An RNA of 177 nucleotides, treated with DMS and 2A3 and read out base by base. The reactions ran in a buffer of 150 mM KOAc, 10 mM MgCl2 and 150 mM bicine (pH 8.5), at 24 C. Source: RMDB library RFMREP, as collected in RNAgym. The DMS profile rests on 5,548 reads. For DMS the reverse transcriptase was MarathonRT.

[RMDB]
RNA sequence: GGGAACGACUCGAGUAGAGUCGAAAAGCUUUUUUGGCUGCGCUCGGCGUGUGUGCUGUGUGUGCUUGCUGGUGCCCUGUGCUGCGGUGGGACGUCAAGGUCAGUUCGUAUGCUGCGGGAAAUGGCCCCUGUUAAUUACGUUCGCGUAAUUAACAGGAAAAGAAACAACAACAACAAC
Reactivity to DMS in 0.01 (KOAc 150mM, MgCl2 10mM, bicine 150mM(pH8.5), 24C), signal-to-noise 3, nucleotides 027 to 126: g010c060u000u000u000u000u000u000g000g010c010u000g000c080g010c020u000c030g020g000c040g000u000g020u000g020u010g010c020u000g010u000g020u000g020u000g000c030u000u010g010c050u010g020g030u000g010c040c030c060u000g010u000g000c040u010g000c080g000g010u010g010g020g020a070c080g000u000c120a070a080g000g000u010c030a060g010u000u000c070g010u000a100u000g010c050u000g000c030g010g010g000a040a050a090u000g010g010c050c070
Reactivity to 2A3 in 0.01 (KOAc 150mM, MgCl2 10mM, bicine 150mM(pH8.5), 24C), signal-to-noise 2, nucleotides 027 to 126: g040c010u040u060u000u040u180u250g040g000c020u060g040c050g010c030u050c010g080g000c030g020u080g000u030g040u050g040c040u020g030u030g010u010g020u040g130c050u070u050g000c000u050g020g030u060g020c030c000c000u060g040u040g020c030u020g030c010g020g050u040g040g030g020a020c020g020u070c050a060a050g040g000u010c000a030g000u060u020c000g010u040a050u170g030c010u030g010c010g000g040g010a020a130a040u080g060g000c000c000